[RMDB]
RNA sequence: GGGAACGACUCGAGUAGAGUCGAAAAACUGCUUAAAAAACUCAUAAGAACUUACAGACAUAUGAGGCGAAACAAAGUGAGAGGAAGAAAGGUGGGUAACGUCUGUAAACGAGGAACAUUACAAAAGCUAGUGAUUAGCGUUCGCGCUAAUCACUAGAAAAGAAACAACAACAACAAC
Reactivity to DMS in 0.01 (KOAc 150mM, MgCl2 10mM, bicine 150mM(pH8.5), 24C), signal-to-noise 2, nucleotides 027 to 126: a030c010u010g000c080u040u020a010a000a060a160a020a050c020u030c030a020u010a100a040g000a090a020c170u010u010a080c110a020g000a110c130a210u080a020u000g010a030g020g000c090g030a050a090a030c150a090a020a060g120u000g000a070g000a030g070g000a020a020g010a070a060a140g020g020u020g020g000g000u000a090a030c090g000u000c010u070g030u020a010a030a130c100g000a110g010g030a050a020c130a110u000u000a040c210a000a060a060a060g000
Reactivity to 2A3 in 0.01 (KOAc 150mM, MgCl2 10mM, bicine 150mM(pH8.5), 24C), signal-to-noise 3, nucleotides 027 to 126: a010c070u090g060c090u190u190a000a150a000a040a010a020c000u010c010a090u060a130a050g030a080a030c020u040u040a000c010a020g030a010c000a010u190a060u150g010a000g000g030c020g100a090a030a000c070a030a170a050g060u130g030a110g010a060g050g010a010a100g010a070a230a000g160g050u190g010g030g000u030a030a000c040g010u030c010u000g050u030a090a000a000c040g000a000g090g000a160a000c060a120u190u250a090c110a120a090a000a000g040